Structure probing data (DMS and 2A3) for a 177-nucleotide construct. Values are in units of 0.01, from 0 to 300, in steps of 10. The RNA was probed in 150 mM KOAc, 10 mM MgCl2 and 150 mM bicine (pH 8.5) at 24 C. DMS adducts were read by reverse transcription with MarathonRT.
RNA sequence: GGGAACGACUCGAGUAGAGUCGAAAAACUGGCGAUGUGGGUUGAACCAAAUAUUGGGAUAAGACGUCUAAUAUUCACUAAUAGAUACCACAAAAGGUGUUAGUUCAUUAAGACAGCAGGACGGUGGGUCUUUAAAUGUUUUCGAACAUUUAAAGACAAAAGAAACAACAACAACAAC
Reactivity to DMS in 0.01 (KOAc 150mM, MgCl2 10mM, bicine 150mM(pH8.5), 24C), signal-to-noise 9, nucleotides 027 to 126: a070c050u010g000g010c050g010a070u010g010u000g000g010g000u000u000g000a090a110c070c090a050a060a080u010a060u010u000g010g000g010a070u020a070a110g010a090c180g000u000c010u000a040a060u010a040u000u010c080a060c080u000a040a050u010a120g000a090u010a060c020c010a060c110a070a060a090a100g010g010u000g010u010u000a060g010u010u010c080a050u020u010a070a100g000a040c060a050g000c050a040g000g010a050c060g000g010u000g010g010
Reactivity to 2A3 in 0.01 (KOAc 150mM, MgCl2 10mM, bicine 150mM(pH8.5), 24C), signal-to-noise 8, nucleotides 027 to 126: a010c020u030g030g000c030g070a110u060g020u050g040g050g010u060u070g050a060a030c010c000a020a090a020u200a060u070u070g040g010g000a010u050a130a100g110a070c090g020u000c010u030a040a050u050a070u150u060c040a020c060u010a020a040u050a070g110a050u090a090c010c000a030c050a040a150a060a030g010g000u030g020u030u030a040g010u030u030c030a030u070u050a020a030g020a030c010a010g020c020a010g030g020a020c030g040g020u040g070g030